[RMDB]
An RNA of 177 nucleotides, treated with DMS and 2A3 and read out base by base.
RNA sequence: GGGAACGACUCGAGUAGAGUCGAAAAUGUGCGGCUCUAGGCGAAUUUAUAUCCGUGUUUUGCCUAGGUCGCAUUGGCAUGCACUGCCAUGCCGGGCGGUGCACGAGGAUGUAGCGUCCGCUAGUCAAGUCUCAGGACCAUUCGUGGUUCUGGGGCUAAAAGAAACAACAACAACAAC
Reactivity to DMS in 0.01 (KOAc 150mM, MgCl2 10mM, bicine 150mM(pH8.5), 24C), signal-to-noise 9, nucleotides 027 to 126: u030g010u000g000c000g000g000c000u050c010u000a000g000g010c000g010a010a020u020u030u040a100u040a110u050c180c170g010u010g010u010u000u010u010g010c000c000u000a000g000g010u000c000g000c000a000u000u010g000g010c040a080u010g000c040a110c110u020g000c050c010a040u020g000c080c070g000g000g010c000g000g010u000g000c010a030c070g000a140g010g010a140u010g010u010a050g010c030g010u010c020c020g000c070u010a050g000u020c110a110
Reactivity to 2A3 in 0.01 (KOAc 150mM, MgCl2 10mM, bicine 150mM(pH8.5), 24C), signal-to-noise 9, nucleotides 027 to 126: u130g000u010g000c000g010g000c020u030c010u160a000g000g000c000g020a010a010u050u230u050a280u080a080u120c070c080g060u070g060u060u010u020u130g000c000c000u000a000g000g000u000c000g000c000a000u000u010g000g000c010a000u010g000c030a040c140u090g000c030c000a010u050g010c010c000g030g000g000c010g010g050u000g000c010a010c020g080a110g200g020a070u050g020u090a010g060c000g010u000c000c010g000c030u020a010g040u030c050a040

The DMS profile rests on 124,988 reads. The reactions ran in a buffer of 150 mM KOAc, 10 mM MgCl2 and 150 mM bicine (pH 8.5), at 24 C. DMS adducts were read by reverse transcription with MarathonRT. The data come from the RNA Mapping Database (RMDB), library OK1LIB.